Source: RMDB library OK3TST, as collected in RNAgym. An RNA of 207 nucleotides, treated with DMS and 2A3 and read out base by base.

RNA sequence: GGGAACGACUCGAGUAGAGUCGAAAAGGGAUCAGAAUUGGUGUUUUCAAUAACACCCUGCUUUUAAGAAAUUAAUGUUCUUAUUACACAAUGUCACCGAAAUUGUAGCCAUGUGGAAGCAUGGGGGUUCCUGUACCUUUUGGCAAGGUUUGAGGGAGGGAGGAUAGUAUUUCGAUACUAUCCUCCCAAAAGAAACAACAACAACAAC
Reactivity to DMS in 0.01 (KOAc 150mM, MgCl2 10mM, bicine 150mM(pH8.5), 24C), signal-to-noise 2, nucleotides 027 to 156: g020g040g010a100u000c020a050g000a060a120u000u000g030g030u000g030u000u020u000u000c150a120a110u010a050a080c000a030c000c030c090u000g000c030u000u000u000u000a020a050g010a070a010a140u010u010a070a100u000g010u000u000c040u020u010a030u010u010a060c050a050c030a060a080u000g020u000c010a270c060c000g010a030a060a110u000u000g000u000a140g010c000c060a070u000g020u000g000g020a140a200g010c010a030u020g000g010g010g050g030u010u000c020c000u010g040u000a050c010c010u000u000u000u000g040g020c100a030a070g030g000u000u000u020g000a080g040g010g010a260
Reactivity to 2A3 in 0.01 (KOAc 150mM, MgCl2 10mM, bicine 150mM(pH8.5), 24C), signal-to-noise 3, nucleotides 027 to 156: g060g010g020a050u090c010a040g090a120a150u120u080g010g000u030g020u030u050u070u190c190a170a100u110a090a020c010a010c000c010c030u020g030c040u020u050u050u050a040a000g010a020a050a030u140u140a070a080u300g040u070u000c010u030u060a060u040u140a030c030a010c030a120a090u120g040u080c060a050c160c000g050a040a110a170u100u130g040u090a030g020c010c000a060u040g020u030g040g080a080a000g020c030a060u080g010g020g020g010g010u010u050c000c000u010g050u040a060c000c000u020u050u050u080g080g010c000a020a020g080g000u010u020u130g060a060g010g020g010a030

Background:
High DMS reactivity at an A or C suggests that its Watson-Crick edge is free. The RNA was probed in 150 mM KOAc, 10 mM MgCl2 and 150 mM bicine (pH 8.5) at 24 C. DMS adducts were read by reverse transcription with MarathonRT.